[RMDB]
RNA sequence: GGGAACGACUCGAGUAGAGUCGAAAAAGGCACUCUUUCCAAGGAAACCUUGAGUAUGGCUUCCUGACCUCUUAAUAGAAUGAGCCUAGUGAAUCCAUCUUAAAGCCCUCACAAGACACAGGCUGUGAGAAAGCCAGGCUAUUGGUAAUAAUGGUUAAUUUUACGUGGUCUUCGGACCACGUAAAAUAAAAGAAACAACAACAACAAC
Reactivity to 2A3 in 0.01 (KOAc 150mM, MgCl2 10mM, bicine 150mM(pH8.5), 24C), signal-to-noise 2, nucleotides 027 to 156: a020g060g000c060a040c040u070c020u050u110u000c000c000a000a020g060g010a070a210a070c030c060u080u070g010a040g060u170a020u050g000g000c010u010u020c000c000u020g110a090c000c000u070c000u100u240a220a180u170a250g150a150a130u220g000a030g000c000c000u030a050g020u020g240a000a030u040c000c000a030u030c050u020u150a120a120a030g010c020c000c010u000c000a060c020a090a080g050a050c060a000c050a250g140g030c070u070g020u000g010a090g000a090a010a000g000c020c020a010g020g030c030u110a100u120u050g070g000u030a070a070u110a160a050u200g040g000u120u120a070
Reactivity to DMS in 0.01 (KOAc 150mM, MgCl2 10mM, bicine 150mM(pH8.5), 24C), signal-to-noise 1, nucleotides 027 to 156: a100g000g000c010a060c030u010c060u000u000u000c050c060a080a060g000g000a010a020a070c000c020u040u000g010a190g010u010a060u010g050g000c040u000u000c000c030u000g020a090c050c050u000c040u000u010a180a220u000a130g030a080a090u000g010a040g080c020c010u000a040g030u040g010a100a040u000c030c010a090u000c060u000u000a090a080a170g010c000c000c010u040c070a300c010a080a100g000a130c040a110c030a050g000g000c020u000g000u010g000a120g000a060a030a090g030c010c050a150g030g040c020u010a060u000u000g030g010u000a030a050u000a080a110u000g000g030u000u000a080